The record gives the reactivity of an RNA of 207 nucleotides to 2A3 and DMS. Reactivities are given for positions 27 through 156.
[RMDB]
RNA sequence: GGGAACGACUCGAGUAGAGUCGAAAACAUUUUCUGUGUCUUUCUUCUAAAGUCUUUAAACUGCUGCAUCAUAGGAAUUUAGUUUACUAAAUCCAAAUUACAAAUUUCAAGUACAACUUGGCUUCUAAUCUCCUAUUGUGAGAGGAAGGCUGUAACAAUCUCCAUCCAUAUUCGUAUGGAUGGAGAUAAAAGAAACAACAACAACAAC
Reactivity to 2A3 in 0.01 (KOAc 150mM, MgCl2 10mM, bicine 150mM(pH8.5), 24C), signal-to-noise 4, nucleotides 027 to 156: c030a030u120u060u090u040c040u060g100u010g040u060c020u020u070u020c030u070u010c060u100a110a100a060g030u010c030u070u200u090a100a230a130c060u100g070c040u070g000c000a040u020c010a050u070a030g020g030a090a030u050u040u060a050g050u040u120u110a140c060u050a010a050a040u030c030c010a090a060a060u130u110a090c050a030a160a050u040u190u180c030a110a010g050u030a160c020a110a060c080u000u020g030g000c000u020u000c000u060a050a060u020c010u020c050c020u070a110u160u180g050u090g060a040g000a000g010g010a000a000g010g000c020u000g050u080a060a070c030a050
Reactivity to DMS in 0.01 (KOAc 150mM, MgCl2 10mM, bicine 150mM(pH8.5), 24C), signal-to-noise 1, nucleotides 027 to 156: c030a060u030u000u000u000c020u060g070u010g000u000c020u010u010u010c020u000u000c100u000a060a150a130g010u010c000u020u000u000a010a050a140c050u000g010c050u000g030c040a060u010c080a090u000a060g020g000a050a050u000u000u000a040g010u000u000u000a180c010u000a000a050a030u000c020c030a050a010a110u000u000a140c060a060a090a190u000u010u000c100a020a140g020u000a060c100a010a100c020u000u020g020g020c010u000u000c020u000a080a150u000c020u010c000c010u010a140u020u020g010u000g000a070g010a160g000g010a020a050g050g030c010u000g010u030a070a080c100a150